[RMDB]
RNA sequence: GGGAACGACUCGAGUAGAGUCGAAAACAAUGAAACCAUUGAUCAAUUUGAAAAUGAAAAAGUGACAACACUUUAUGGAACAUGUGGUCACUGUCAUUGCUGUGAUGAAGCCUCUGAAUAAAUAAAAUCCUAUAAAGAUGUUCGCAUCUUUAUAGGAAAAAGAAACAACAACAACAAC
Reactivity to DMS in 0.01 (KOAc 150mM, MgCl2 10mM, bicine 150mM(pH8.5), 24C), signal-to-noise 8, nucleotides 027 to 126: c050a060a030u020g010a120a130a130c130c010a030u010u010g000a100u000c030a060a110u030u030u020g000a050a070a060a020u010g000a040a070a050a040a010g020u000g000a020c090a070a050c010a020c100u010u010u030a110u030g010g000a090a110c180a080u000g000u000g020g020u000c000a000c020u000g000u000c010a000u000u000g000c050u000g010u010g010a060u000g000a080a100g000c050c030u000c070u010g010a070a070u020a060a060a080u010a050a050a090a120
Reactivity to 2A3 in 0.01 (KOAc 150mM, MgCl2 10mM, bicine 150mM(pH8.5), 24C), signal-to-noise 3, nucleotides 027 to 126: c030a010a050u120g050a140a030a040c060c020a010u010u050g100a090u080c100a040a030u050u090u190g120a120a090a010a020u060g070a020a050a060a050a040g020u050g020a010c020a180a030c010a110c020u090u100u060a140u200g060g110a050a060c080a090u050g000u000g030g000u000c010a010c010u020g020u060c010a000u000u080g060c030u040g020u060g040a060u080g050a080a040g030c000c000u010c050u030g070a120a070u090a150a050a000u000a040a090a000a060